[RMDB]
RNA sequence: GGGAACGACUCGAGUAGAGUCGAAAAUUCACUUCGCCCCUUUUCUGCAUAAUCCUUGUUUAGCCAAAAGGCGUAGAUAACAAGUUCAUUAACAAGAAAAGCAAAGAGUCUCUUAACGGUUAAGAGCACUUUCAAACCAGUUCGCUGGUUUGAAAGUAAAAGAAACAACAACAACAAC
Reactivity to 2A3 in 0.01 (KOAc 150mM, MgCl2 10mM, bicine 150mM(pH8.5), 24C), signal-to-noise 4, nucleotides 027 to 126: u040u020c030a010c070u060u040c080g050c000c000c000c000u000u000u010u020c010u010g070c050a140u020a120a010u140c060c040u000u010g010u000u020u050a030g000c010c000a110a260a100a140g000g000c000g070u090a050g000a040u030a030a000c000a020a020g000u040u100c010a030u010u020a010a030c060a050a000g030a020a030a010a010g020c070a000a110a030g080a030g100u020c010u000c000u040u030a150a080c130g300g030u070u040a000a030g010a000g000c000
Reactivity to DMS in 0.01 (KOAc 150mM, MgCl2 10mM, bicine 150mM(pH8.5), 24C), signal-to-noise 4, nucleotides 027 to 126: u050u030c060a060c140u030u050c120g010c010c010c060c000u000u010u000u000c000u010g010c160a300u030a020a010u000c300c000u000u000g040u010u000u030a080g010c000c000a050a090a140a170g020g010c030g010u030a050g010a040u030a020a010c000a000a010g000u000u000c230a010u000u000a020a130c230a090a020g030a030a030a000a040g020c180a060a090a060g000a050g000u030c000u000c000u010u000a030a160c170g030g020u010u000a040a020g000a040g030c100